An RNA of 207 nucleotides, treated with 2A3 and DMS and read out base by base. For 2A3 the reverse transcriptase was SuperScript II with manganese.

RNA sequence: GGGAACGACUCGAGUAGAGUCGAAAAAAGCGAUUCGUCGCUUAUUUAAUCCUAAGUCACCAACAGCGAGCGUUGUCAGAUGUGGUCGGAAACGACCAUACAUCUUGGAUUUACGCUCGACAUGGUGAUAUGGAACGGGGAUGUCUUCGGACAUCAACGUAAAACGCGUUUUCGAACGCGUUUUACGAAAAGAAACAACAACAACAAC
Reactivity to 2A3 in 0.01 (KOAc 150mM, MgCl2 10mM, bicine 150mM(pH8.5), 24C), signal-to-noise 2, nucleotides 027 to 156: a000a000g050c020g020a050u080u210c280g020u000c000g090c000u020u010a030u000u100u080a020a050u000c000c000u010a100a030g000u010c010a000c010c000a010a050c020a200g060c000g000a000g000c000g000u010u050g020u000c010a000g000a000u000g020u020g010g000u000c010g040g020a040a080a070c020g000a000c000c000a010u040a010c000a000u000c010u050u100g160g000a010u130u140u140a000c000g000c000u000c000g000a010c000a020u030g000g000u000g000a000u000a020u020g030g000a030a080c080g120g020g000g000a000u000g000u000c000u030u090c240g110g000a000c000a000u000c010a000a020
Reactivity to DMS in 0.01 (KOAc 150mM, MgCl2 10mM, bicine 150mM(pH8.5), 24C), signal-to-noise 1, nucleotides 027 to 156: a040a070g020c010g010a040u000u000c300g010u000c000g020c010u030u000a050u000u010u010a140a170u000c000c020u010a010a250g030u000c010a040c010c030a070a050c090a230g000c000g000a010g040c010g020u000u000g000u000c000a040g000a010u020g010u000g010g020u000c000g000g000a120a120a300c010g030a010c000c000a070u000a040c030a030u000c070u000u010g010g010a070u000u000u000a010c080g000c010u000c000g030a020c020a300u010g000g040u000g010a000u000a200u000g000g000a080a110c070g010g020g020g010a080u000g010u000c020u010u040c300g050g000a000c000a000u010c000a060a130